[RMDB]
RNA sequence: GGGAACGACUCGAGUAGAGUCGAAAAAUGGGAACAUGGAGGAAAGCCCAAACUCUUCUUCGCCUCUAGAACUAGGGGCUGAGAUUUGGUUUCCUUGUUUUCCUGAUGCCUCCCAUGCCUAUUGUUCCUCUAAAUAUUAGUUCGCUAAUAUUUAGAGAAAAGAAACAACAACAACAAC
Reactivity to DMS in 0.01 (KOAc 150mM, MgCl2 10mM, bicine 150mM(pH8.5), 24C), signal-to-noise 9, nucleotides 027 to 126: a010u000g000g000g010a150a290c020a010u000g010g020a030g010g000a020a010a020g010c060c300c190a020a010a040c070u000c160u000u010c080u010u010c300g010c000c000u000c000u000a020g010a150a110c160u000a010g010g000g000g010c000u000g000a010g000a040u000u000u010g010g010u010u010u010c140c110u010u010g010u000u000u000u000c000c010u010g000a020u000g000c110c100u000c010c000c000a010u000g000c010c010u000a070u010u010g000u000u010c080
Reactivity to 2A3 in 0.01 (KOAc 150mM, MgCl2 10mM, bicine 150mM(pH8.5), 24C), signal-to-noise 9, nucleotides 027 to 126: a000u020g000g000g000a040a020c010a010u040g110g150a010g010g010a020a010a010g030c010c010c000a010a020a030c090u060c040u160u030c020u130u110c080g000c010c000u010c000u010a060g060a210a100c190u020a010g000g000g000g000c010u020g000a000g000a010u000u020u050g050g010u040u110u140c040c000u050u080g030u010u030u010u010c000c000u020g020a010u030g020c010c050u010c010c000c000a010u050g040c000c010u100a150u060u110g030u040u030c000
Conditions: 150 mM KOAc, 10 mM MgCl2 and 150 mM bicine (pH 8.5), 24 C. This 177-nucleotide RNA was probed chemically with DMS and 2A3. For DMS the reverse transcriptase was MarathonRT. 2A3 adducts were read by reverse transcription with SuperScript II with manganese.